[RMDB]
RNA sequence: GGGAACGACUCGAGUAGAGUCGAAAACUGACAUAACCUGUUCCGGGCAGCUUGCCUGUAGCUAAGCAUUUAACUGGUCUCUUACAGGAGAAGCAGGACCCUAGUAGCUAGGGACACAUCUCAAACUGUGACCCAUGAACCAGUAGGUAUUGGCGUCGGACACAGAUAUCUUCGGAUAUCUGUGUCCAAAAGAAACAACAACAACAAC
Reactivity to 2A3 in 0.01 (KOAc 150mM, MgCl2 10mM, bicine 150mM(pH8.5), 24C), signal-to-noise 2, nucleotides 027 to 156: c030u050g050a020c000a120u110a010a080c000c020u020g090u110u020c040c020g060g060g000c060a070g110c070u080u200g030c040c020u050g040u060a040g000c010u070a040a010g060c070a130u010u070u130a120a060c010u010g000g000u000c040u000c000u160u180a060c060a030g000g040a000g000a020a020g060c000a010g020g010a010c000c000c000u050a130g100u170a050g130c100u010a000g020g000g030a000c050a050c000a100u020c070u050c050a130a090a110c000u000g020u040g110a100c000c080c000a030u050g040a020a020c020c010a000g000u010a040g090g000u110a090u090u060g060g010c090g050u120c080